[RMDB]
RNA sequence: GGGAACGACUCGAGUAGAGUCGAAAAGAUAUGGACCGAGAGCGAUAAGCUGCACUCGGAAACGAGUGUCAGCUUUUGACGCUCGGCGUCCUAAGUCAAAACAUGUGACUCUUCGGAGUCACAUGAAGAACCCUGGUAUCUUCGGAUACCAGGGUUCAAAAGAAACAACAACAACAAC
Reactivity to DMS in 0.01 (KOAc 150mM, MgCl2 10mM, bicine 150mM(pH8.5), 24C), signal-to-noise 1, nucleotides 027 to 126: g010a020u000a160u000g000g010a030c050c010g010a170g000a010g010c000g010a140u020a010a020g000c010u000g000c010a010c000u000c010g010g000a030a050a050c000g000a010g040u010g010u050c030a000g000c010u000u000u000u000g030a200c050g010c020u000c000g020g010c270g030u000c000c000u000a010a070g000u010c000a070a070a120a300c000a010u000g020u010g000a020c000u010c000u000u010c180g000g000a000g020u000c000a000c000a010u000g010a070a070